[RMDB]
RNA sequence: GGGAACGACUCGAGUAGAGUCGAAAAGAUGAUCUGCUGUUCCACAGUUGCAAGAGACUAUAUAUGGGGCGGAAAGGCUUAUGGAAUGGAUCUCUCAAAGCUGAAUUAAGACCGAUGGAGAAGAUAAAUCCGUUAUAGAAUUCGUUCUAUAACGGAUAAAAGAAACAACAACAACAAC
Reactivity to DMS in 0.01 (KOAc 150mM, MgCl2 10mM, bicine 150mM(pH8.5), 24C), signal-to-noise 6, nucleotides 027 to 126: g010a080u010g000a080u000c030u000g010c050u000g010u000u010c020c030a100c090a080g010u000u000g000c160a110a080g000a120g010a070c070u000a080u000a120u010a100u010g010g010g010g000c050g020g000a070a100a100g000g000c040u000u010a080u000g000g000a070a050u000g010g000a080u000c030u000c030u000c060a050a150a070g000c040u000g010a090a080u010u000a070a070g010a080c030c020g000a090u010g000g010a090g000a060a090g000a080u010a060a120
Reactivity to 2A3 in 0.01 (KOAc 150mM, MgCl2 10mM, bicine 150mM(pH8.5), 24C), signal-to-noise 3, nucleotides 027 to 126: g060a040u140g040a040u000c010u060g000c000u040g080u080u000c010c010a030c020a030g070u050u060g000c030a100a000g020a010g020a120c040u020a010u020a000u010a050u300g010g000g010g000c010g040g060a070a050a020g070g000c000u040u060a040u100g000g060a030a020u060g050g060a100u020c020u000c000u000c020a080a050a020g000c020u030g040a100a050u130u070a100a010g030a060c020c000g020a020u050g060g040a040g010a100a020g040a010u100a100a260